Structure probing data (2A3 and DMS) for a 177-nucleotide construct.

[RMDB]
RNA sequence: GGGAACGACUCGAGUAGAGUCGAAAAGCGGCUACACGAACAUAGGCCACUGACCCCGAACGUCGAGAGACGCCCCGGGUCAGGACAGCUCUUCCCGGCUUAAGGGUUGAGCCCAGGUGGCUUCCGGGCUGACAAAAAGAUUCGUCUUUUUGUCAGCAAAAGAAACAACAACAACAAC
Reactivity to 2A3 in 0.01 (KOAc 150mM, MgCl2 10mM, bicine 150mM(pH8.5), 24C), signal-to-noise 8, nucleotides 027 to 126: g040c030g020g000c020u090a030c090a020c110g070a140a010c050a140u170a100g060g010c020c020a020c010u010g010a010c010c000c010c030g050a070a010c010g000u010c000g010a010g000a000g010a130c000g020c010c010c020c010g010g000g000u000c000a000g000g030a020c050a020g000c000u000c000u020u010c000c000c000g010g040c080u150u200a080a120g010g010g000u020u040g020a010g000c000c010c000a050g020g040u040g010g010c000u090u010c020c020g050g050
Reactivity to DMS in 0.01 (KOAc 150mM, MgCl2 10mM, bicine 150mM(pH8.5), 24C), signal-to-noise 6, nucleotides 027 to 126: g010c050g010g000c030u010a080c130a090c080g010a090a070c100a100u020a090g000g000c020c020a160c000u000g000a050c010c010c000c100g000a210a150c020g010u000c000g000a230g000a260g000a010c000g010c060c030c220c300g020g000g020u000c010a010g010g000a110c220a160g000c000u010c010u010u010c000c000c000g000g000c180u020u030a100a140g000g000g020u000u000g000a030g000c000c050c080a120g000g000u010g020g000c030u010u000c030c030g010g020

Reactivities are given for positions 27 through 126.